[RMDB]
Overview
Structure probing data (2A3 and DMS) for a 177-nucleotide construct.
RNA sequence: GGGAACGACUCGAGUAGAGUCGAAAAGUAAAGCGCGAGGGCUGGUGAGGAUUUGGAGGCGUGACAGAGAUUGUAGGGAUCCUGCCUCCUCCCUCUCCGCGCGGCGCCUCCUAGCCGAUAUAAAAAACAACUAAUGGAACUUCGGUUCCAUUAGUUGAAAAGAAACAACAACAACAAC
Reactivity to 2A3 in 0.01 (KOAc 150mM, MgCl2 10mM, bicine 150mM(pH8.5), 24C), signal-to-noise 2, nucleotides 027 to 126: g030u040a100a070a050g030c030g000c050g070a300g020g190g000c110u210g020g010u040g020a030g000g040a060u150u170u170g010g000a010g020g010c020g040u100g010a050c070a060g120a020g040a090u080u070g140u170a130g050g110g000a010u000c000c000u020g020c000c000u030c000c000u020c000c000c000u020c020u050c020c010g000c060g000c000g000g010c010g030c000c000u000c000c000u010a030g060c050c040g040a030u090a020u140a260a160a000a020a000a010
Reactivity to DMS in 0.01 (KOAc 150mM, MgCl2 10mM, bicine 150mM(pH8.5), 24C), signal-to-noise 2, nucleotides 027 to 126: g000u010a070a160a150g020c020g030c050g010a130g030g000g020c060u020g030g000u000g000a040g020g000a050u000u010u000g020g000a050g000g020c170g010u000g010a060c150a060g010a120g000a050u000u000g030u030a130g020g000g020a040u000c020c020u000g000c000c000u020c000c020u000c100c000c010u000c000u000c000c000g010c040g000c010g000g000c030g000c020c010u000c030c020u000a090g020c070c060g000a130u010a090u010a000a000a060a050a060a130
For 2A3 the reverse transcriptase was SuperScript II with manganese.